[RMDB]
RNA sequence: GGGAACGACUCGAGUAGAGUCGAAAAGAGUAAAUAGAGGAGUCAGGGUUCGCACCUGCUCCGCGAACCUAGGGUAACACUGACUCUGGAGCGUAAGAGAGAGCAGACGAAGAUACGUCUGCAUAGAGCUCAGGUGCAUAUUCGUAUGCACCUGAGCAAAAGAAACAACAACAACAAC
Reactivity to DMS in 0.01 (KOAc 150mM, MgCl2 10mM, bicine 150mM(pH8.5), 24C), signal-to-noise 2, nucleotides 027 to 126: g020a030g000u000a070a030a170u010a140g010a220g000g030a010g020u000c000a040g000g000g010u000u030c000g000c000a170c110c070u020g000c050u010c050c140g010c070g010a010a000c000c030u020a260g000g020g040u000a140a100c110a300c070u000g000a020c000u000c060u000g000g010a070g010c130g010u000a100a100g040a090g010a110g030a160g000c040a020g000a020c000g020a070a140g000a160u040a040c000g000u000c000u000g010c010a000u020a050g030a180
Reactivity to 2A3 in 0.01 (KOAc 150mM, MgCl2 10mM, bicine 150mM(pH8.5), 24C), signal-to-noise 2, nucleotides 027 to 126: g010a000g060u140a000a120a190u210a040g090a020g080g000a000g000u010c010a020g000g000g040u000u000c020g000c020a050c030c070u130g010c010u000c000c000g000c000g000a000a000c000c060u150a070g040g160g000u060a110a010c000a010c040u020g000a000c010u050c010u030g000g020a000g060c050g050u130a110a000g030a010g020a000g000a010g120c000a000g000a000c020g020a040a120g050a140u280a160c000g000u000c000u040g000c010a000u040a000g080a020
Annotation
Structure probing data (DMS and 2A3) for a 177-nucleotide construct. The reactions ran in a buffer of 150 mM KOAc, 10 mM MgCl2 and 150 mM bicine (pH 8.5), at 24 C. The 2A3 profile rests on 1,289 reads. For DMS the reverse transcriptase was MarathonRT. 2A3 adducts were read by reverse transcription with SuperScript II with manganese. Source: RMDB library OK1LIB, as collected in RNAgym.